Source information:
Conditions: 150 mM KOAc, 10 mM MgCl2 and 150 mM bicine (pH 8.5), 24 C. The record gives the reactivity of an RNA of 207 nucleotides to 2A3. As a SHAPE reagent, 2A3 marks flexible, mostly unpaired nucleotides at the ribose 2'-OH.

RNA sequence: GGGAACGACUCGAGUAGAGUCGAAAAAGUCACCUAUUACGAUAGGUGACAUUUGAACCAGCGAACAAUUCAGUUGCCAGAUUCGAGGUUUCAGUCUGAAUCAUAGUAGCCAUUACGAUGGCUACAACUCACUCCCGACUGUUCGCAGUCGGGAGAAGUAGCAUGAGGUGUUCGCACCUCAUGCUACAAAAGAAACAACAACAACAAC
Reactivity to 2A3 in 0.01 (KOAc 150mM, MgCl2 10mM, bicine 150mM(pH8.5), 24C), signal-to-noise 1, nucleotides 027 to 156: a000g000u010c000a000c000c000u000a000u000u050a050c230g050a000u000a000g000g020u010g010a000c000a000u000u010u040g070a080a080c010c010a010g060c050g090a070a060c010a050a050u030u040c010a020g000u020u050g300c050c030a050g030a090u030u180c020g130a080g120g000u000u160u170c050a060g150u000c010u030g050a020a030u110c090a030u050a170g030u000a000g000c000c000a010u080u080a050c190g090a030u030g000g000c000u010a020c000a000a000c010u120c050a030c000u000c000c000c000g000a000c000u000g020u050u080c180g010c050a000g000u000c000g000g070g000a000g000a000a000